[RMDB]
RNA sequence: GGGAACGACUCGAGUAGAGUCGAAAAAAUCUGCUGCUCCCGGCUGGCCAGCUGAGCCGACGGGGCGAACUCGCCGCCACCAUGUGCGGCCCAGGUGCUUUGAGUGAACUGCAAGCCACCGAGGUAACGGUUAUCAUUACUUCGGUAAUGAUAACCGAAAAGAAACAACAACAACAAC
Reactivity to DMS in 0.01 (KOAc 150mM, MgCl2 10mM, bicine 150mM(pH8.5), 24C), signal-to-noise 2, nucleotides 027 to 126: a050a060u000c060u020g020c080u010g010c060u010c010c010c060g010g020c050u010g000g010c020c030a190g020c170u010g010a080g000c020c020g000a090c050g010g000g000g000c010g020a060a130c150u010c090g050c030c030g020c030c060a140c190c110a130u030g030u010g010c010g000g010c010c090c010a070g000g010u000g040c030u000u000u000g000a070g040u000g000a110a060c110u010g020c060a070a050g000c160c030a020c030c000g000a100g000g000u010a070a100
Reactivity to 2A3 in 0.01 (KOAc 150mM, MgCl2 10mM, bicine 150mM(pH8.5), 24C), signal-to-noise 2, nucleotides 027 to 126: a000a050u070c050u070g030c010u080g000c030u110c000c000c040g050g000c060u040g010g010c010c010a130g110c220u170g040a010g020c020c000g010a030c040g020g030g010g010c030g010a030a020c020u020c090g000c020c010g040c030c040a050c070c110a120u110g090u150g050c020g000g000c070c000c000a000g020g000u030g010c030u120u070u110g050a070g000u140g070a160a120c060u130g030c030a040a010g020c000c010a020c020c010g050a160g010g040u050a130a000
An RNA of 177 nucleotides, treated with DMS and 2A3 and read out base by base. DMS adducts were read by reverse transcription with MarathonRT. The RNA was probed in 150 mM KOAc, 10 mM MgCl2 and 150 mM bicine (pH 8.5) at 24 C.